Record summary: Chemical mapping of a 177-nucleotide RNA with 2A3 and DMS. Conditions: 150 mM KOAc, 10 mM MgCl2 and 150 mM bicine (pH 8.5), 24 C. High 2A3 reactivity points to a flexible backbone, as in loops and unpaired stretches. Values are in units of 0.01, from 0 to 300, in steps of 10.
RNA sequence: GGGAACGACUCGAGUAGAGUCGAAAAAGUUGCGUCAGGUCGGCCGGCAGCGGGCCAAUGCCCUGGUACGCCCCGCUGUAGUCGUAGACCGUGCCGUCGGCGAUGCGAAAAAGCGGCGCGCCGCGGAAUCACCGAUGUAUUUCGAUACAUCGGUGAUAAAAGAAACAACAACAACAAC
Reactivity to 2A3 in 0.01 (KOAc 150mM, MgCl2 10mM, bicine 150mM(pH8.5), 24C), signal-to-noise 1, nucleotides 027 to 126: a030g090u080u070g030c040g030u000c070a070g040g030u030c030g060g000c020c000g100g030c040a020g040c010g000g010g070c000c010a020a000u080g000c020c010c020u180g080g030u020a010c090g000c000c040c030c060g020c020u020g000u020a030g030u040c030g040u070a030g010a070c000c010g000u070g050c000c000g120u240c030g010g020c030g010a050u130g030c000g090a220a110a000a050a030g210c060g060g030c050g020c010g000c020c000g000c000g010g010a000
Reactivity to DMS in 0.01 (KOAc 150mM, MgCl2 10mM, bicine 150mM(pH8.5), 24C), signal-to-noise 3, nucleotides 027 to 126: a110g000u010u000g010c120g020u000c070a160g000g020u000c020g010g020c040c020g010g000c010a020g010c010g000g010g000c030c040a080a100u000g020c030c010c060u010g010g030u000a030c160g010c160c000c020c020g010c000u000g000u000a080g010u000c030g000u000a120g010a060c010c030g000u000g010c000c020g020u000c020g010g010c010g010a060u010g020c010g000a070a090a060a150a130g020c070g010g010c040g010c040g000c010c020g000c020g000g000a140